[RMDB]
RNA sequence: GGGAACGACUCGAGUAGAGUCGAAAAAACCUUGCCGUUCACCACCGAUUCCGGUGACAAGAGUCAUCGUCGAUAUUAAUUCGUUCAGUAAAUUUUGUGGUUUUUCACCGUUUAACAAAAUCGGAGCGGUAGCGUUUUAGUUCGCUAAAACGCUACCAAAAGAAACAACAACAACAAC
Reactivity to DMS in 0.01 (KOAc 150mM, MgCl2 10mM, bicine 150mM(pH8.5), 24C), signal-to-noise 1, nucleotides 027 to 126: a090a080c010c020u000u010g020c060c030g030u000u000c040a080c060c000a100c080c020g010a030u000u000c060c040g000g000u000g000a060c030a070a150g000a130g000u000c010a010u000c060g000u000c020g010a080u000a150u000u000a070a130u000u000c030g020u000u000c060a090g000u000a060a110a080u000u000u000u000g000u000g000g020u030u000u000u000u010c190a080c000c060g010u020u020u020a080a080c160a040a030a030a030u000c000g000g000a150g010c100
Reactivity to 2A3 in 0.01 (KOAc 150mM, MgCl2 10mM, bicine 150mM(pH8.5), 24C), signal-to-noise 1, nucleotides 027 to 126: a010a010c000c010u000u070g050c020c000g020u010u040c010a040c040c000a020c000c040g040a030u080u000c040c000g000g000u010g010a040c010a080a250g050a020g130u000c010a010u010c020g090u050c030g000a000u040a040u150u220a130a140u110u030c020g050u070u060c040a000g060u090a010a070a220u090u060u090u080g000u040g040g030u040u050u030u040u050c040a050c000c020g000u000u110u130a190a060c030a140a120a030a010u060c000g020g010a030g000c080